[RMDB]
RNA sequence: GGGAACGACUCGAGUAGAGUCGAAAACAUCCACUGCUACGGCAGUGGAUGAACGAGGUAGGUACGCCUACCUCGAAAGAGGGAUGUGCUCAUACACAUUAAACGUCCAUGGUACGCCAUGGACGAAAUUAUGCACGUGAUUCGUCACGUGCAUAAUAAAAGAAACAACAACAACAAC
Reactivity to DMS in 0.01 (KOAc 150mM, MgCl2 10mM, bicine 150mM(pH8.5), 24C), signal-to-noise 3, nucleotides 027 to 126: c000a000u000c000c000a000c000u000g010c000u000a120c220g050g000c000a010g010u000g000g000a000u000g020a040a100c060g030a010g010g000u000a000g000g010u000a100c300g010c000c000u000a010c000c010u000c000g000a020a080a080g010a030g000g020g000a020u000g000u000g010c020u000c140a140u010a160c020a000c020a030u000u000a070a070a190c020g000u000c000c000a000u010g010g010u000a140c290g020c020c000a000u010g000g000a000c000g010a010a020
Reactivity to 2A3 in 0.01 (KOAc 150mM, MgCl2 10mM, bicine 150mM(pH8.5), 24C), signal-to-noise 3, nucleotides 027 to 126: c000a000u000c000c000a000c000u010g000c000u020a100c220g130g000c010a000g010u010g010g000a000u000g000a010a000c010g000a000g000g010u000a000g000g030u040a010c200g080c020c000u000a010c000c000u000c000g010a010a030a000g060a010g030g140g010a010u010g010u010g000c000u080c150a140u210a180c010a000c000a010u040u100a100a160a040c010g000u020c010c000a000u000g020g000u040a050c280g040c040c000a000u000g000g000a000c000g000a000a000

An RNA of 177 nucleotides, treated with DMS and 2A3 and read out base by base. For DMS, 3,878 sequencing reads were counted. 2A3 adducts were read by reverse transcription with SuperScript II with manganese. The 2A3 profile rests on 6,015 reads.